Description
An RNA of 207 nucleotides, treated with DMS and 2A3 and read out base by base. Conditions: 150 mM KOAc, 10 mM MgCl2 and 150 mM bicine (pH 8.5), 24 C. Reactivities are given for positions 27 through 156. It was measured as part of the RMDB library OK3TST.
[RMDB]
RNA sequence: GGGAACGACUCGAGUAGAGUCGAAAAGCGGGAAAAACAUGCGGUUUCUGUUCCGGUACAGAUCCUUCUCUUCGGCAAGCGUGUUGCUGCGGAUAAGCAGGAUCGCGCCAACGUCGACUAUGUCAUCAUCACAGUCCUCGCUGGAAGAUAGCUCCUCCUGAUUCCUAAGAUUCGUCUUAGGAAUCAGAAAAGAAACAACAACAACAAC
Reactivity to DMS in 0.01 (KOAc 150mM, MgCl2 10mM, bicine 150mM(pH8.5), 24C), signal-to-noise 1, nucleotides 027 to 156: g100c010g000g010g040a030a060a100a060a110c020a130u010g020c060g010g040u000u000u000c030u000g010u010u000c020c090g010g050u000a090c060a120g010a060u000c030c010u000u000c020u000c000u000u010c030g010g020c050a130a090g010c070g000u030g020u000u000g010c010u000g000c030g030g000a120u000a050a150g020c090a050g030g010a030u000c020g030c070g060c000c010a010a000c020g040u000c010g000a010c040u000a000u000g020u000c090a170u000c200a100u010c020a020c000a060g020u000c020c000u000c030g050c030u000g050g010a110a080g000a130u000a060g010c040u000c020c030u000c060
Reactivity to 2A3 in 0.01 (KOAc 150mM, MgCl2 10mM, bicine 150mM(pH8.5), 24C), signal-to-noise 6, nucleotides 027 to 156: g050c010g020g000g040a050a050a000a060a010c080a040u150g040c070g060g010u040u090u030c040u080g030u120u050c090c060g030g030u120a060c040a040g000a010u020c010c000u040u070c050u000c000u070u030c020g050g000c050a090a060g020c060g020u120g120u180u160g020c000u000g000c010g080g080a150u100a190a040g020c020a010g010g040a020u020c000g000c000g000c030c010a040a040c030g010u030c020g010a030c020u060a060u160g050u060c030a090u010c020a020u080c020a090c010a080g050u050c000c020u070c030g000c010u010g010g030a040a020g020a070u100a050g050c010u010c020c000u030c010